Structure probing data (2A3 and DMS) for a 177-nucleotide construct. Reactivities are given for positions 27 through 126. For 2A3, 1,416 sequencing reads were counted. For DMS the reverse transcriptase was MarathonRT. For DMS, 3,499 sequencing reads were counted. The RNA was probed in 150 mM KOAc, 10 mM MgCl2 and 150 mM bicine (pH 8.5) at 24 C. For 2A3 the reverse transcriptase was SuperScript II with manganese.
RNA sequence: GGGAACGACUCGAGUAGAGUCGAAAACGCGUAUCUCCUCUCCGACGACCUGUAGCUUAUCCUAACGGAACCAUGAGGCCUCGUGCCAUGUAGACCCUCUCCGCCGACCUCCGAAGAACCCGGAAAAGCGUUUAUAACUUUUCGAAGUUAUAAACGCAAAAGAAACAACAACAACAAC
Reactivity to 2A3 in 0.01 (KOAc 150mM, MgCl2 10mM, bicine 150mM(pH8.5), 24C), signal-to-noise 1, nucleotides 027 to 126: c000g030c010g000u050a100u050c090u000c040c000u010c040u000c000c000g060a070c020g020a030c000c010u040g040u030a020g000c050u050u110a060u170c000c020u000a040a060c010g000g000a030a030c020c010a080u110g060a030g020g000c000c030u090c070g060u100g010c010c020a080u080g030u010a050g080a160c000c000c000u030c010u010c000c000g020c020c010g030a070c000c010u000c010c010g020a030a050g090a070a040c010c020c020g060g000a020a100a070a060
Reactivity to DMS in 0.01 (KOAc 150mM, MgCl2 10mM, bicine 150mM(pH8.5), 24C), signal-to-noise 3, nucleotides 027 to 126: c080g030c080g030u000a100u010c020u010c010c030u000c030u010c020c020g020a120c110g010a100c050c030u010g000u010a100g000c060u010u000a110u010c030c010u000a070a150c130g000g010a060a110c080c040a060u000g000a130g010g000c030c020u000c140g000u000g020c040c030a030u010g000u000a060g000a090c060c030c010u000c050u000c020c040g030c060c030g010a090c040c020u000c010c020g000a080a100g010a060a110c010c010c010g010g000a050a090a130a160